This 177-nucleotide RNA was probed chemically with DMS and 2A3. For 2A3, 911 sequencing reads were counted. The RNA was probed in 150 mM KOAc, 10 mM MgCl2 and 150 mM bicine (pH 8.5) at 24 C.
[RMDB]
RNA sequence: GGGAACGACUCGAGUAGAGUCGAAAAAGAAGGCUGAGAUCUGGAAGCUCAGACCAGAAGCCCCAGUGUCCAUAAAUGCUGGGGUCACACGCCUUGCAGAGAUAAACAGAGCGUGACCAGCGUGCACACGAUGGAAUGGGUUCGCCCAUUCCAUCGUAAAAGAAACAACAACAACAAC
Reactivity to DMS in 0.01 (KOAc 150mM, MgCl2 10mM, bicine 150mM(pH8.5), 24C), signal-to-noise 1, nucleotides 027 to 126: a070g030a140a130g000g020c000u000g010a190g030a060u020c100u000g010g060a110a170g010c030u000c070a090g050a240c000c000a020g000a080a200g000c010c000c000c030a060g000u000g010u000c090c150a260u000a040a150a010u000g020c010u010g060g000g040g020u010c070a000c040a040c070g000c000c000u000u050g000c100a110g010a190g000a130u020a050a050a130c100a060g000a050g000c010g000u000g000a120c030c060a060g000c020g000u010g010c130a110c140
Reactivity to 2A3 in 0.01 (KOAc 150mM, MgCl2 10mM, bicine 150mM(pH8.5), 24C), signal-to-noise 1, nucleotides 027 to 126: a000g100a000a050g040g000c010u010g020a030g040a140u050c080u130g050g070a170a000g030c050u010c060a060g030a250c020c000a020g000a060a000g050c000c000c000c000a010g000u010g000u000c110c040a100u130a210a210a010u080g000c010u020g000g000g000g020u020c000a010c000a010c000g000c000c000u030u020g040c030a020g040a020g010a200u180a100a160a000c010a030g070a030g040c010g010u010g010a030c020c020a040g060c020g130u090g030c090a040c000